[RMDB]
RNA sequence: GGGAACGACUCGAGUAGAGUCGAAAAGAUCUGGAGCGCGUCCUCCGUCAGGGUGUGUGCUAUGGAAAUCCCAAAAAAGGUGGUCAGCCAUGGGACAAGGUUAUGAUCUUGGUCGAGGGCAUCUUCAGACUCAUAUAGUGUUCGCACUAUAUGAGUCAAAAGAAACAACAACAACAAC
Reactivity to 2A3 in 0.01 (KOAc 150mM, MgCl2 10mM, bicine 150mM(pH8.5), 24C), signal-to-noise 3, nucleotides 027 to 126: g070a110u030c020u060g030g000a000g010c080g010c040g020u040c000c010u040c000c020g060u060c050a040g000g040g000u020g020u020g010u010g040c020u020a030u030g000g000a050a070a060u050c000c000c000a050a140a060a020a010a000g080g010u080g020g090u030c030a020g040c010c010a020u020g030g020g020a030c030a090a070g080g000u130u110a090u300g100a050u020c010u030u020g030g000u030c020g010a070g000g010g010c010a020u020c000u040u010c010a000
Reactivity to DMS in 0.01 (KOAc 150mM, MgCl2 10mM, bicine 150mM(pH8.5), 24C), signal-to-noise 8, nucleotides 027 to 126: g010a140u000c020u000g010g010a050g020c070g020c060g000u000c060c010u000c050c140g020u010c200a060g020g010g010u000g030u000g020u000g020c030u000a070u000g000g000a070a100a120u000c010c000c010a010a040a080a070a100a100g000g020u000g010g000u000c110a110g000c010c020a060u010g010g000g000a050c040a070a080g000g000u000u010a070u000g010a070u000c010u000u000g000g010u000c160g000a080g010g010g000c080a050u000c030u000u010c110a190